[RMDB]
The data come from the RNA Mapping Database (RMDB), library RFM100. The record gives the reactivity of an RNA of 177 nucleotides to 2A3 and DMS. 2A3 adducts were read by reverse transcription with SuperScript II with manganese.

RNA sequence: GGGAACGACUCGAGUAGAGUCGAAAACCUGUAAACGGCGCGCCUCCGCGGCUCCAAUUUAUUUCGGGGCAGUUCUUGCCCGGGGAGGAUACUUAAUGCUCGGGUCCGCGCAGCAGAGUCAGUCCUCUUGCAUGAUGGUGUUCGCACCAUCAUGCAAAAAAGAAACAACAACAACAAC
Reactivity to 2A3 in 0.01 (KOAc 150mM, MgCl2 10mM, bicine 150mM(pH8.5), 24C), signal-to-noise 2, nucleotides 027 to 126: c000c000u060g090u160a120a120a010c090g010g000c020g000c000g050c060c000u060c000c030g070c050g020g000c000u000c000c060a030a020u080u080u190a130u000u120u100c100g030g010g020g000c000a030g060u120u050c000u050u040g070c000c000c000g000g010g010g000a060g000g010a010u000a050c000u120u160a120a000u100g000c060u040c030g040g000g130u060c070c000g040c000g030c040a010g020c000a000g010a010g030u050c050a010g130u020c000c010u030c000
Reactivity to DMS in 0.01 (KOAc 150mM, MgCl2 10mM, bicine 150mM(pH8.5), 24C), signal-to-noise 1, nucleotides 027 to 126: c000c000u070g000u030a020a110a080c070g020g000c010g040c160g000c100c000u000c080c030g010c130g000g000c000u000c030c100a110a100u040u040u060a050u000u020u040c130g020g010g060g000c040a010g010u150u010c070u000u000g020c010c000c030g000g000g000g000a050g020g010a030u000a080c130u060u010a060a100u010g010c070u000c080g020g020g000u040c240c000g010c020g000c060a050g000c060a030g040a060g000u020c080a210g010u000c000c000u020c130